[RMDB]
RNA sequence: GGGAACGACUCGAGUAGAGUCGAAAAUAAGGUGGCGUUGCACUCCGAGUUUCAGCAUGGAUGGACUCGUUAAAGAAGUCUAUGCAACCUUUAGAUGCAGACGAUUAUUCGUAUGCAAUGGCUGCCUAAUUAGCAAAAGUUAAUUAACCAGCCAUCGGUGACUUUAAGAGUUCGCUCUUAAAGUCACAAAAGAAACAACAACAACAAC
Reactivity to DMS in 0.01 (KOAc 150mM, MgCl2 10mM, bicine 150mM(pH8.5), 24C), signal-to-noise 2, nucleotides 027 to 156: u000a070a090g020g010u000g020g000c040g000u010u000g030c030a100c040u000c100c010g010a030g010u000u000u010c020a090g050c080a050u020g010g000a040u000g030g010a010c010u010c000g010u010u010a020a060a070g010a030a070g000u000c030u010a030u000g050c000a170a110c110c030u000u000u010a100g010a210u000g020c000a040g000a010c020g010a040u000u020a140u000u000c020g030u000a020u000g010c030a050a060u020g010g000c000u020g000c110c030u000a020a020u010u000a030g000c000a040a090a080a250g030u000u000a000a030u000u000a000a090c060c000a030g010c000c000a010u000c080g010
Reactivity to 2A3 in 0.01 (KOAc 150mM, MgCl2 10mM, bicine 150mM(pH8.5), 24C), signal-to-noise 4, nucleotides 027 to 156: u170a050a020g030g000u020g010g000c020g040u040u050g050c120a020c030u000c000c010g000a000g000u040u060u180c050a050g000c060a100u150g070g120a040u020g010g000a030c000u000c040g050u030u090a040a060a050g070a050a010g020u000c010u010a020u020g000c000a010a040c000c000u050u110u090a120g020a140u120g010c010a010g010a030c010g010a030u090u060a090u300u200c010g010u020a000u000g000c000a040a020u010g010g000c000u000g000c010c010u000a000a010u010u010a000g020c030a110a190a250a070g010u010u010a000a000u000u020a010a030c010c000a000g000c000c000a040u080c100g110
This 207-nucleotide RNA was probed chemically with DMS and 2A3. For DMS, 3,556 sequencing reads were counted. For 2A3 the reverse transcriptase was SuperScript II with manganese. The 2A3 profile rests on 3,935 reads. Conditions: 150 mM KOAc, 10 mM MgCl2 and 150 mM bicine (pH 8.5), 24 C. Values cover nucleotides 27 to 156.